Structure probing data (DMS and 2A3) for a 177-nucleotide construct. DMS adducts were read by reverse transcription with MarathonRT. DMS (dimethyl sulfate) methylates the pairing face of unpaired adenines and cytosines. The DMS profile rests on 5,021 reads.
RNA sequence: GGGAACGACUCGAGUAGAGUCGAAAAGCGAGGCGGGGGCUCCUUCGCUUGGGCCUCGCCCCCGCCCGCACACCUGUGCGGCCAGGACUCGGGUGCGGGAUCCGCGGGCGCCGGCGGCCGGCGCAGGCGUAUAGCCCGAAUUCGUUCGGGCUAUACGAAAAGAAACAACAACAACAAC
Reactivity to DMS in 0.01 (KOAc 150mM, MgCl2 10mM, bicine 150mM(pH8.5), 24C), signal-to-noise 4, nucleotides 027 to 126: g000c020g010a090g030g010c000g020g020g010g030g020c030u000c020c010u000u010c270g000c140u010u000g000g010g000c300c080u010c200g010c010c000c010c000c000g010c010c000c010g010c000a050c140a070c020c010u010g010u010g000c020g000g020c030c000a130g000g000a100c050u000c030g010g000g000u000g000c050g000g010g000a100u010c030c010g000c030g010g000g020c110g030c010c010g010g040c100g010g000c020c000g060g020c020g000c010a020g000g010
Reactivity to 2A3 in 0.01 (KOAc 150mM, MgCl2 10mM, bicine 150mM(pH8.5), 24C), signal-to-noise 2, nucleotides 027 to 126: g010c010g060a140g010g000c040g000g020g010g010g010c020u040c040c020u060u070c050g120c180u040u060g010g010g000c000c030u030c060g010c000c010c010c010c000g000c000c020c010g000c010a030c000a010c010c000u010g020u020g030c000g000g010c000c000a050g060g040a140c010u020c120g000g030g110u110g020c100g080g080g100a130u100c030c000g040c030g040g020g100c290g140c020c020g120g100c050g000g020c020c010g070g000c020g000c000a000g000g000